Overview
Conditions: 150 mM KOAc, 10 mM MgCl2 and 150 mM bicine (pH 8.5), 24 C. An RNA of 177 nucleotides, treated with 2A3 and DMS and read out base by base. For DMS the reverse transcriptase was MarathonRT. Values cover nucleotides 27 to 126. Source: RMDB library M2PK90, as collected in RNAgym.

RNA sequence: GGGAACGACUCGAGUAGAGUCGAAAAUGAAAUCAAAAUAAGAGAGGAAAUGUAGGAGAUUAGAAUCCACUGGAAAUCGUCCUAUUGUCACAAUAUGACCGAAAUAACGACCACCAAAAUAAAAAAAACACAUACCUUGAUUCGUCAAGGUAUGUGUAAAAGAAACAACAACAACAAC
Reactivity to 2A3 in 0.01 (KOAc 150mM, MgCl2 10mM, bicine 150mM(pH8.5), 24C), signal-to-noise 1, nucleotides 027 to 126: u090g000a010a000a090u190c110a050a090a060a090u210a200a040g070a020g020a030g000g090a040a040a110u090g010u040a040g010g000a000g000a040u000u010a020g060a140a030u040c010c040a110c200u070g050g000a050a020a000u000c000g020u080c000c000u000a000u100u040g070u040c060a050c030a170a040u120a080u220g010a040c020c040g080a090a030a000u000a050a020c050g060a010c000c020a040c020c020a010a110a040a040u210a030a120a010a010a010a000a000
Reactivity to DMS in 0.01 (KOAc 150mM, MgCl2 10mM, bicine 150mM(pH8.5), 24C), signal-to-noise 1, nucleotides 027 to 126: u000g030a070a070a040u000c040a050a060a050a000u000a010a110g020a110g020a040g000g030a030a100a030u030g000u000a010g020g000a170g000a080u020u000a040g010a150a090u000c010c020a050c060u020g030g000a050a040a040u000c000g000u020c000c020u010a030u010u010g000u030c050a010c120a130a040u020a300u010g000a070c010c090g050a010a060a060u030a040a150c070g010a040c090c050a010c070c170a030a080a060a030u060a050a030a000a120a020a000a120